This 177-nucleotide RNA was probed chemically with DMS and 2A3.

RNA sequence: GGGAACGACUCGAGUAGAGUCGAAAAGGAAUGCGAAUGCGUGCAAUGCGGUGGUGGGCGCGUUCAACCUCCAGGGGUCCUCCUGGGACCGCACCCGGCGCCAGUACCGCAUCCACAACAGCAAGCCCACCCAACCAAACUUCGGUUUGGUUGGGUGAAAAGAAACAACAACAACAAC
Reactivity to DMS in 0.01 (KOAc 150mM, MgCl2 10mM, bicine 150mM(pH8.5), 24C), signal-to-noise 2, nucleotides 027 to 126: g000g050a110a100u020g000c090g000a100a060u000g000c120g000u020g020c160a110a090u010g010c090g000g010u000g000g000u000g040g030g050c030g000c020g000u000u000c080a100a140c130c080u000c030c000a060g000g000g010g030u000c140c070u010c090c070u000g000g000g000a040c030c030g000c040a080c040c010c020g030g000c050g000c020c020a110g020u000a000c060c010g000c000a020u000c260c000a060c030a040a080c100a240g000c010a050a140g000c010c010
Reactivity to 2A3 in 0.01 (KOAc 150mM, MgCl2 10mM, bicine 150mM(pH8.5), 24C), signal-to-noise 1, nucleotides 027 to 126: g060g020a110a020u040g000c000g050a150a050u120g060c010g060u050g020c090a040a040u090g030c030g010g000u040g070g270u170g030g060g030c010g010c000g080u160u100c020a070a170c000c040u060c020c040a030g000g040g000g080u140c030c010u110c000c030u090g020g020g000a020c000c020g030c020a080c000c030c040g120g030c060g000c000c000a020g080u050a000c020c000g010c010a000u000c000c020a050c040a040a120c030a010g000c000a010a060g040c000c000

The data come from the RNA Mapping Database (RMDB), library OK2TRN. The RNA was probed in 150 mM KOAc, 10 mM MgCl2 and 150 mM bicine (pH 8.5) at 24 C.